An RNA of 177 nucleotides, treated with DMS and 2A3 and read out base by base.
For DMS, 1,148 sequencing reads were counted.
RNA sequence: GGGAACGACUCGAGUAGAGUCGAAAAGCCGCCGCCACCGGCAAGGGCGUGCUCCUCAACUUCGAGGACGGCGAGGGGAAGGUGUGGCGAUUCCGGUACUCGUACUGGAACAGCAGCCAGAGCUACGGUCUUGACGUCUAUUCGUAGACGUCAAGACAAAAGAAACAACAACAACAAC
Reactivity to DMS in 0.01 (KOAc 150mM, MgCl2 10mM, bicine 150mM(pH8.5), 24C), signal-to-noise 2, nucleotides 027 to 126: g010c000c020g060c040c020g000c000c030a040c100c050g000g010c040a110a100g000g010g000c010g000u000g000c120u000c000c000u000c080a170a130c260u000u010c130g010a050g000g000a100c100g010g010c100g020a120g000g000g000g000a150a050g000g030u000g030u000g030g010c040g030a300u000u000c000c000g000g000u020a000c020u000c220g010u020a030c040u000g000g020a020a030c120a100g000c050a130g000c000c010a080g000a160g000c060u000a050c150g000
Reactivity to 2A3 in 0.01 (KOAc 150mM, MgCl2 10mM, bicine 150mM(pH8.5), 24C), signal-to-noise 1, nucleotides 027 to 126: g000c000c000g000c010c000g010c000c010a160c100c020g080g000c080a060a140g130g000g040c030g050u120g080c020u030c030c000u030c020a160a180c110u210u180c150g000a010g080g000a000c020g050g020c030g000a090g000g010g010g080a090a040g070g000u210g050u010g160g000c000g020a000u000u020c000c000g030g030u000a050c030u050c140g060u040a010c020u010g050g020a040a060c000a090g110c000a040g020c030c000a050g070a040g030c070u110a040c100g020